[RMDB]
RNA sequence: GGGAACGACUCGAGUAGAGUCGAAAAUGAUCGAUAGAUUGUAAGGUUUGUCGGUCGUUUUAAUCGUGUCUUACAACACGAUGAUGUUACCCCAUAAUGACCUGAGAGGUAUGAGGCGAUACCCGUACAUUCUUGAUGGCUUCGGCCAUCAAGAAUGAAAAGAAACAACAACAACAAC
Reactivity to DMS in 0.01 (KOAc 150mM, MgCl2 10mM, bicine 150mM(pH8.5), 24C), signal-to-noise 2, nucleotides 027 to 126: u000g000a000u000c000g030a010u000a000g020a010u000u000g020u000a090a190g010g010u000u000u000g020u000c000g020g000u000c010g010u000u000u000u000a120a050u000c000g000u000g030u010c030u000u040a150c300a140a020c010a010c000g000a000u010g010a140u030g020u000u000a130c090c010c000c070a070u000a080a080u020g020a060c070c000u000g010a160g010a100g010g000u000a060u020g020a050g010g000c040g000a100u030a100c020c000c030g030u010a130
Reactivity to 2A3 in 0.01 (KOAc 150mM, MgCl2 10mM, bicine 150mM(pH8.5), 24C), signal-to-noise 1, nucleotides 027 to 126: u010g010a000u000c000g000a000u010a030g020a000u020u070g100u240a180a080g040g000u000u000u010g010u000c030g000g000u000c010g010u010u000u000u040a020a020u000c000g020u010g000u000c130u200u250a080c060a050a000c010a010c020g000a000u000g030a040u090g100u070u160a180c000c050c000c000a030u170a170a110u180g080a050c020c020u070g130a080g000a000g150g020u050a060u100g050a080g060g000c040g020a010u030a050c010c010c010g010u030a030

Chemical mapping of a 177-nucleotide RNA with DMS and 2A3. The data come from the RNA Mapping Database (RMDB), library RFMREP. Values cover nucleotides 27 to 126. High DMS reactivity at an A or C suggests that its Watson-Crick edge is free.